[RMDB]
RNA sequence: GGGAACGACUCGAGUAGAGUCGAAAACAACGCUGCGCGCGACGGUUGGCGGGUCGCAGUACGUGCCGACGACCCCUGGCCACGAGGAAUCCCGGUACGGCCCCGCGCUAGUCCUGGACGGCGUCCGCUCGCAGUGAGCUUUCGAGCUCACUGCGAGAAAAGAAACAACAACAACAAC
Reactivity to 2A3 in 0.01 (KOAc 150mM, MgCl2 10mM, bicine 150mM(pH8.5), 24C), signal-to-noise 2, nucleotides 027 to 126: c050a010a000c000g010c040u080g070c090g020c010g010c050g050a080c030g030g040u020u080g170g000c020g010g000g090u110c020g030c090a040g090u120a120c070g010u040g010c000c010g080a150c060g040a050c000c000c000c070u030g160g000c030c040a100c110g020a060g070g010a030a060u100c030c020c000g000g000u020a030c060g050g000c000c000c000c020g050c040g000c010u060a050g020u000c020c040u100g070g040a010c000g020g020c010g000u010c010c020g050

Source: RMDB library OK1LIB, as collected in RNAgym. An RNA of 177 nucleotides, treated with 2A3 and read out base by base. As a SHAPE reagent, 2A3 marks flexible, mostly unpaired nucleotides at the ribose 2'-OH. The reactions ran in a buffer of 150 mM KOAc, 10 mM MgCl2 and 150 mM bicine (pH 8.5), at 24 C. For 2A3 the reverse transcriptase was SuperScript II with manganese.